[RMDB]
This 207-nucleotide RNA was probed chemically with 2A3 and DMS.

RNA sequence: GGGAACGACUCGAGUAGAGUCGAAAACAGAAUACUUCCGCAGUUUGAAACAGACACAAGAGAGGCCUUGAGCUUGAUGGACAGGGUUAUAGCUGUGGAUCAGUUGACAUCAUCUUCUAGUGAUGAACUGCAAGACUAUGAAGACCUUGCCUUGGCAACGCAAUUUCUAGUUCGCUAGAAAUUGCGUAAAAGAAACAACAACAACAAC
Reactivity to 2A3 in 0.01 (KOAc 150mM, MgCl2 10mM, bicine 150mM(pH8.5), 24C), signal-to-noise 2, nucleotides 027 to 156: c020a030g110a160a050u080a110c030u050u020c020c030g000c020a050g000u060u140u240g090a070a050a010c040a030g100a020c030a000c070a180a030g050a010g010a030g130g000c000c030u070u110g040a080g050c030u080u070g010a050u090g080g010a000c020a020g040g020g010u020u050a050u110a070g000c010u030g030u040g140g000a030u060c010a000g020u010u080g050a040c010a000u010c000a020u050c010u180u040c090u170a040g020u020g050a030u020g010a000a010c040u000g010c030a130a000g040a060c020u030a050u190g100a090a070g020a010c010c000u000u030g010c030c000u040u070g050g020c040a050
Reactivity to DMS in 0.01 (KOAc 150mM, MgCl2 10mM, bicine 150mM(pH8.5), 24C), signal-to-noise 1, nucleotides 027 to 156: c020a190g040a180a210u010a060c030u000u000c050c050g050c070a030g020u000u000u010g010a300a120a140c060a080g030a080c050a130c110a030a130g000a190g000a130g000g000c060c030u000u020g010a070g020c000u010u000g010a130u010g070g010a070c060a070g000g000g040u030u010a100u010a070g000c020u060g060u010g030g020a090u000c010a040g000u000u010g000a130c000a030u020c040a000u020c020u000u000c110u000a110g000u010g000a080u010g000a070a040c010u000g000c070a080a130g010a040c000u000a110u020g020a070a130g010a010c030c020u000u000g030c010c100u000u000g030g030c000a150

As a SHAPE reagent, 2A3 marks flexible, mostly unpaired nucleotides at the ribose 2'-OH. The reactions ran in a buffer of 150 mM KOAc, 10 mM MgCl2 and 150 mM bicine (pH 8.5), at 24 C. 2A3 adducts were read by reverse transcription with SuperScript II with manganese. DMS adducts were read by reverse transcription with MarathonRT. Reactivities are given for positions 27 through 156. The data come from the RNA Mapping Database (RMDB), library OK3TST.